[RMDB]
This 177-nucleotide RNA was probed chemically with 2A3 and DMS. It was measured as part of the RMDB library RFMREP. For DMS the reverse transcriptase was MarathonRT. As a SHAPE reagent, 2A3 marks flexible, mostly unpaired nucleotides at the ribose 2'-OH. The reactions ran in a buffer of 150 mM KOAc, 10 mM MgCl2 and 150 mM bicine (pH 8.5), at 24 C. Values cover nucleotides 27 to 126.
RNA sequence: GGGAACGACUCGAGUAGAGUCGAAAAACGCUGUCGUUUCGCCGUCGACAACAAUCACACGCGCACACUUCCACCAUUAUCAUCUAUCCACCACACAGGUUCGUCGGAUGCGAAACGGUGGUGUUCAGUAAGAUGGAUUGUUCGCAAUCCAUCUUACAAAAGAAACAACAACAACAAC
Reactivity to 2A3 in 0.01 (KOAc 150mM, MgCl2 10mM, bicine 150mM(pH8.5), 24C), signal-to-noise 2, nucleotides 027 to 126: a030c010g000c020u000g000u030c000g000u000u000u000c010g020c010c020g000u010c000g020a010c000a030a010c010a020a090u130c020a010c020a020c070g040c000g010c020a010c000a000c040u080u040c020c020a040c010c010a090u090u080a070u150c040a010u010c030u080a090u070c020c010a030c020c000a030c000a010c020a050g110g000u030u020c020g000u010c000g010g010a010u030g000c000g000a000a000a000c010g010g000u000g000g000u010g000u040u030c010a010
Reactivity to DMS in 0.01 (KOAc 150mM, MgCl2 10mM, bicine 150mM(pH8.5), 24C), signal-to-noise 3, nucleotides 027 to 126: a020c010g010c010u000g010u000c000g010u010u000u010c000g010c010c070g020u000c010g000a010c010a080a040c090a180a080u000c060a080c080a070c100g020c040g010c040a040c090a060c060u000u000c050c030a060c040c060a080u000u000a100u010c050a070u000c070u000a120u000c050c040a060c030c030a040c050a040c100a110g010g020u000u000c170g010u000c050g010g000a050u000g000c010g000a010a010a010c020g000g000u000g000g020u000g020u000u000c140a110